An RNA of 207 nucleotides, treated with DMS and 2A3 and read out base by base. The reactions ran in a buffer of 150 mM KOAc, 10 mM MgCl2 and 150 mM bicine (pH 8.5), at 24 C. Values are in units of 0.01, from 0 to 300, in steps of 10.
RNA sequence: GGGAACGACUCGAGUAGAGUCGAAAAGAACUGUUAACUUACUUUUGAAUGCCCAAUAUUGUCCACCUUGAAGAGCCGAGACAAGCUUAGUUAAGUCAUUUAAGCACAGAAGAUCCGCCUGUGUGGGCAAUCGCGAGUCAAACAGGCUCAAAUCAUAGGCACUAAAAUGAUUCGUCAUUUUAGUGCCAAAAGAAACAACAACAACAAC
Reactivity to DMS in 0.01 (KOAc 150mM, MgCl2 10mM, bicine 150mM(pH8.5), 24C), signal-to-noise 1, nucleotides 027 to 156: g020a080a060c070u020g040u000u000a090a060c020u020u010a110c060u000u020u020u000g000a170a140u020g000c000c010c000a090a110u000a060u010u020g010u000c000c020a020c000c000u000u010g010a110a060g000a140g000c040c090g050a290g020a140c080a090a210g000c070u010u010a140g000u010u020a050a110g020u000c100a120u000u000u010a050a070g000c010a190c130a070g010a230a190g010a070u000c000c010g000c000c030u020g000u020g070u020g000g020g000c020a040a050u000c100g040c030g020a070g040u000c020a010a110a110c050a090g020g030c010u000c080a020a040a080u020c050a040u000a200
Reactivity to 2A3 in 0.01 (KOAc 150mM, MgCl2 10mM, bicine 150mM(pH8.5), 24C), signal-to-noise 3, nucleotides 027 to 156: g010a080a020c050u080g040u050u100a090a030c010u120u190a070c010u120u070u050u110g140a200a070u160g030c010c060c000a040a050u100a050u040u010g000u020c000c010a020c030c000u030u040g030a070a060g050a060g060c100c070g010a040g010a030c030a100a000g000c030u030u020a010g040u160u090a210a050g050u080c020a100u140u070u060a030a000g010c000a010c000a090g100a140a000g020a200u000c000c020g000c010c010u100g010u020g000u040g070g010g000c020a000a000u010c030g000c040g040a000g030u020c050a090a050a120c060a150g000g000c000u020c010a010a040a020u170c110a080u240a140